[RMDB]
RNA sequence: GGGAACGACUCGAGUAGAGUCGAAAAGAACGGCAGAGAGCCGAGAAAUGAGACGAGGUAGAGCGCGCGCUCUACCAAAAGAUGUGUGUAAAAACGCACGUGUAGGCGCGGCUACACAUCUCAAGAAAUAAUCCACUCGUUUCGACGAGUGGAUUAUAAAAGAAACAACAACAACAAC
Reactivity to 2A3 in 0.01 (KOAc 150mM, MgCl2 10mM, bicine 150mM(pH8.5), 24C), signal-to-noise 2, nucleotides 027 to 126: g020a090a020c010g000g010c040a020g070a050g030a020g300c000c000g010a050g030a030a130a080u140g000a030g010a050c070g040a070g030g010u010a010g010a020g090c120g000c000g030c060g000c070u030c000u080a000c010c000a000a060a000a000g080a090u100g000u000g010u010g020u130a000a030a040a070a050c000g000c000a050c060g000u040g070u080a040g000g060c040g020c000g030g000c000u020a000c000a000c010a000u000c030u000c020a020a000g090a150a150
Reactivity to DMS in 0.01 (KOAc 150mM, MgCl2 10mM, bicine 150mM(pH8.5), 24C), signal-to-noise 3, nucleotides 027 to 126: g020a130a180c020g000g010c000a110g000a120g020a280g000c000c000g000a060g010a080a110a160u030g000a050g010a050c080g000a200g000g010u000a020g010a080g000c020g000c240g020c140g030c010u000c010u010a030c000c010a020a010a140a060g020a080u010g000u010g020u020g000u020a030a050a140a120a090c010g000c010a030c010g020u000g010u030a070g010g000c020g000c020g020g020c110u020a010c020a000c050a100u000c040u000c000a040a050g000a040a060